Chemical mapping of a 177-nucleotide RNA with 2A3 and DMS.

RNA sequence: GGGAACGACUCGAGUAGAGUCGAAAAGAAUCUCACUUGGGCGAAAGUUACGCGCACUUUAGUGACUCCAGCGCGUAUUAGUGAGAUUAUGAAUACGUUGAAAUGAAAGUAUGGGGAUUUAUGAGAAGGGUUAACUAUUCUUCGGAAUAGUUAACCCAAAAGAAACAACAACAACAAC
Reactivity to 2A3 in 0.01 (KOAc 150mM, MgCl2 10mM, bicine 150mM(pH8.5), 24C), signal-to-noise 1, nucleotides 027 to 126: g050a000a000u020c050u000c000a000c010u000u010g060g130g000c080g040a100a080a060g140u120u070a050c000g030c000g000c000a060c000u090u160u280a100g070u130g060a010c060u040c020c020a030g020c000g020c020g030u050a020u140u090a000g000u010g000a000g000a000u010u000a040u020g010a020a020u140a060c020g050u050u010g040a120a070a050u120g020a230a000a000g000u010a040u180g010g000g000g160a170u190u210u050a080u100g050a020g010a110a100
Reactivity to DMS in 0.01 (KOAc 150mM, MgCl2 10mM, bicine 150mM(pH8.5), 24C), signal-to-noise 2, nucleotides 027 to 126: g000a070a010u000c010u040c000a060c010u000u020g100g010g030c020g030a090a030a100g050u030u020a000c040g010c010g080c010a100c160u000u080u030a070g060u000g000a040c010u000c070c150a110g050c020g000c000g000u000a010u000u030a000g030u000g020a000g000a010u000u000a000u000g010a130a050u050a000c090g020u010u040g040a060a060a120u000g000a080a070a020g030u030a100u010g010g000g020g020a150u000u020u020a070u000g000a100g050a070a220
The 2A3 profile rests on 707 reads. The RNA was probed in 150 mM KOAc, 10 mM MgCl2 and 150 mM bicine (pH 8.5) at 24 C. DMS adducts were read by reverse transcription with MarathonRT. The DMS profile rests on 2,258 reads.